The record gives the reactivity of an RNA of 177 nucleotides to 2A3 and DMS. The RNA was probed in 150 mM KOAc, 10 mM MgCl2 and 150 mM bicine (pH 8.5) at 24 C. DMS adducts were read by reverse transcription with MarathonRT. For 2A3, 1,622 sequencing reads were counted. Values are in units of 0.01, from 0 to 300, in steps of 10. 2A3 adducts were read by reverse transcription with SuperScript II with manganese.
RNA sequence: GGGAACGACUCGAGUAGAGUCGAAAAGAAAAGAUGCACAAGGAGCGCGUGCAACAUUAGAGCCAGGACGAGCACGAGGAACACGACACGAACCGGAGUCCUGGCGCGUAUCCUGUUCAAAAGAAAAGAGUACGUGAGUGUUCGCACUCACGUACUCAAAAGAAACAACAACAACAAC
Reactivity to 2A3 in 0.01 (KOAc 150mM, MgCl2 10mM, bicine 150mM(pH8.5), 24C), signal-to-noise 2, nucleotides 027 to 126: g200a000a080a000a000g090a030u030g010c010a020c030a040a040g020g000a010g000c010g010c020g010u050g000c050a070a040c000a060u170u170a030g050a040g130c000c000a000g040g000a000c030g020a040g110c100a070c170g010a090g030g030a170a000c060a010c270g100a040c010a020c090g040a000a030c010c010g000g000a070g010u030c000c000u000g000g000c000g000c000g020u010a200u050c000c000u000g030u090u100c040a000a020a000a130g030a070a120a050a020
Reactivity to DMS in 0.01 (KOAc 150mM, MgCl2 10mM, bicine 150mM(pH8.5), 24C), signal-to-noise 2, nucleotides 027 to 126: g000a120a000a000a050g020a090u000g050c000a000c030a050a080g080g020a040g010c000g030c000g000u000g020c080a120a130c110a010u000u040a100g000a080g010c000c040a040g000g000a020c000g000a060g020c170a110c020g050a110g000g000a020a140c210a060c300g000a300c290a110c120g000a070a020c050c010g000g000a080g040u040c050c000u020g000g050c050g050c100g000u040a090u040c020c000u020g000u020u000c010a110a030a150a040g000a050a020a100a020